About this RNA:
Source: RMDB library OK2TST, as collected in RNAgym. The record gives the reactivity of an RNA of 177 nucleotides to DMS and 2A3. DMS adducts were read by reverse transcription with MarathonRT.
RNA sequence: GGGAACGACUCGAGUAGAGUCGAAAACUUGGUGCCUGACUCAAGAGCUGCCCUGCUGCAGAAGCAUCUGGAUGUGUAUAUAAAUGGGCGAUGUCCUGCUACUCCACGACUGUCAGCACAGCGUGCAAACGAGAUACAGAUUCGUCUGUAUCUCGUUAAAAGAAACAACAACAACAAC
Reactivity to DMS in 0.01 (KOAc 150mM, MgCl2 10mM, bicine 150mM(pH8.5), 24C), signal-to-noise 8, nucleotides 027 to 126: c060u000u000g010g020u000g010c060c040u000g010a110c070u000c070a060a090g000a120g020c050u000g010c030c030c060u000g010c050u000g010c120a060g000a110a120g010c080a080u000c050u000g020g010a060u010g020u000g010u010a080u010a130u010a030a090a080u010g000g000g010c030g000a100u010g010u000c020c020u000g010c060u000a070c050u010c040c010a030c070g010a090c040u000g010u000c070a080g010c090a090c040a050g010c040g020u010g010c140a070
Reactivity to 2A3 in 0.01 (KOAc 150mM, MgCl2 10mM, bicine 150mM(pH8.5), 24C), signal-to-noise 7, nucleotides 027 to 126: c010u030u060g060g010u050g040c020c040u050g070a100c020u030c090a050a060g020a020g100c030u040g020c000c020c010u040g030c030u020g010c020a020g020a150a020g050c010a050u030c020u050g060g030a080u060g090u020g040u050a020u020a010u040a250a200a110u090g020g010g000c050g070a110u150g030u050c010c000u010g030c010u030a040c020u000c020c010a050c050g110a180c110u040g030u120c030a010g030c070a020c010a030g040c020g040u060g030c020a030